[RMDB]
RNA sequence: GGGAACGACUCGAGUAGAGUCGAAAAGAAGUGGCAGGGACAUGCCCCACAAGCUCGUUCUAGCAACAUAUGUUUGGCUAGUUCGAGCGAUUAGUCUUGAGGAGCGUCCUCUCGCCUAUUCACGAGAAUGACGUGACCCGUUCGCGGGUCACGUCAUAAAAGAAACAACAACAACAAC
Reactivity to 2A3 in 0.01 (KOAc 150mM, MgCl2 10mM, bicine 150mM(pH8.5), 24C), signal-to-noise 1, nucleotides 027 to 126: g010a040a010g000u000g000g100c080a000g000g000g000a000c030a040u300g000c000c070c050c000a080c100a100a000g000c000u000c000g020u000u000c000u000a000g070c000a000a160c070a070u100a000u300g050u140u110u000g230g000c000u000a000g000u000u000c000g000a000g000c000g000a000u000u080a000g080u110c000u280u300g000a130g000g000a140g050c030g020u000c000c000u050c000u000c050g050c080c020u020a020u010u000c000a000c000g090a120g080a130